[RMDB]
RNA sequence: GGGAACGACUCGAGUAGAGUCGAAAAGAUAUGGAUCCUGAACUACUCUUUCCCAUCGGAAACGAUGGGUAGGAGCAGGAGUCCUAAGUCAAAGAAGUGUGGUUCAGUUCGCUGAACCACACUUCAACUUAAACACUAGGUUCGCCUAGUGUUUAAGAAAAGAAACAACAACAACAAC
Reactivity to DMS in 0.01 (KOAc 150mM, MgCl2 10mM, bicine 150mM(pH8.5), 24C), signal-to-noise 9, nucleotides 027 to 126: g010a050u000a300u000g000g010a300u000c000c000u000g010a060a040c060u020a300c010u000c010u000u000u000c000c000c000a010u000c000g010g000a130a060a170c010g000a000u000g000g000g010u000a000g000g010a010g000c000a010g000g000a040g010u010c000c000u000a050a160g010u000c050a090a100a150g000a010a010g010u000g020u000g000g010u000u000c000a010g010u000u010c240g020c000u000g000a000a010c000c000a010c000a000c000u000u000c010a030a110
Reactivity to 2A3 in 0.01 (KOAc 150mM, MgCl2 10mM, bicine 150mM(pH8.5), 24C), signal-to-noise 4, nucleotides 027 to 126: g030a020u090a030u160g000g000a010u010c020c010u010g000a050a020c090u270a040c000u240c010u020u030u040c010c000c000a000u010c000g000g020a070a050a050c010g000a000u000g000g020g010u010a010g000g000a000g000c000a000g020g020a020g140u040c010c000u030a110a020g060u040c060a080a060a170g020a000a010g000u010g000u010g000g010u000u020c000a020g010u060u120c240g040c150u010g000a010a000c000c000a000c000a000c000u000u000c010a000a000